[RMDB]
RNA sequence: GGGAACGACUCGAGUAGAGUCGAAAAGAAAGAAAGAAACGAGCUGGCGCAGCCGCACGGGCAACCGUCAAUCCAGCACUUCACAAGUCUUGUCGUUCUGACAGGACAUCCAUCAACCCACCGGGAAAAAAGGACUACAGCUUCGGCUGUAGUCCAAGACUUAUUAUCGCUUCGGCGAUAAUAAGUCAAAAGAAACAACAACAACAAC
Reactivity to 2A3 in 0.01 (KOAc 150mM, MgCl2 10mM, bicine 150mM(pH8.5), 24C), signal-to-noise 2, nucleotides 027 to 156: g030a000a060a010g040a020a130a000g010a020a080a010c050g010a030g020c020u000g030g000c070g000c090a060g110c100c090g040c030a030c020g020g000g010c000a020a030c000c010g050u050c000a000a030u060c010c000a010g040c030a040c000u160u110c050a060c050a250a100g000u000c000u000u020g000u000c020g090u180u290c200u290g000a000c000a000g010g000a000c000a000u000c010c000a010u070c020a020a150c020c000c010a030c110c110g010g040g000a060a050a000a120a000a030g010g000a020c000u020a000c000a010g010c000u030u130c230g140g000c010u000g010u000a000g000u000c000c000a000a000
An RNA of 207 nucleotides, treated with 2A3 and read out base by base. The reactions ran in a buffer of 150 mM KOAc, 10 mM MgCl2 and 150 mM bicine (pH 8.5), at 24 C. Source: RMDB library M2RFPK, as collected in RNAgym.